[RMDB]
RNA sequence: GGGAACGACUCGAGUAGAGUCGAAAAGUGGCGCACGCCUGUAGUCCCAGCUACUCGGGAGGCUGAGACAGGAGGAUCGCUUGAGUCCAGGAGUUCUGGGCUGUAGUGCGCUAUGCCGAUCGGGUGUCCGCACUAAGUUCGGCAUCAAUAUGGUGACGAUAAUAGCAUGGUUCGCCAUGCUAUUAUCAAAAGAAACAACAACAACAAC
Reactivity to 2A3 in 0.01 (KOAc 150mM, MgCl2 10mM, bicine 150mM(pH8.5), 24C), signal-to-noise 5, nucleotides 027 to 156: g070u050g030g000c000g000c000a010c020g020c010c020u060g130u140a030g050u050c000c020c000a000g010c010u080a050c020u040c130g060g030g030a070g030g010c050u020g010a010g010a030c040a020g160g050a060g030g030a120u090c050g030c120u080u150g100a010g010u000c000c010a040g050g040a120g070u170u140c000u000g000g000g000c000u020g030u030a020g000u000g000c010g010c010u010a020u020g000c010c000g010a030u030c050g040g040g020u010g010u060c070c110g120c040a010c010u070a190a120g020u010u010c000g010g000c000a000u030c020a020a060u180a110u260g110g010u080g010a070c110
Reactivity to DMS in 0.01 (KOAc 150mM, MgCl2 10mM, bicine 150mM(pH8.5), 24C), signal-to-noise 2, nucleotides 027 to 156: g010u000g010g000c030g050c020a040c020g000c040c020u000g010u020a130g000u000c010c010c040a110g030c010u000a010c020u020c100g000g010g020a300g000g040c020u000g010a040g010a040c030a160g000g010a090g010g010a060u000c050g000c080u030u000g000a070g020u010c020c010a050g020g000a160g000u000u010c010u010g010g000g020c010u000g000u000a030g010u000g020c020g020c020u010a030u000g010c000c010g020a080u000c060g000g000g010u000g010u020c150c140g020c040a070c060u010a120a160g010u000u010c010g030g030c030a040u000c070a050a070u000a140u010g000g000u000g050a150c170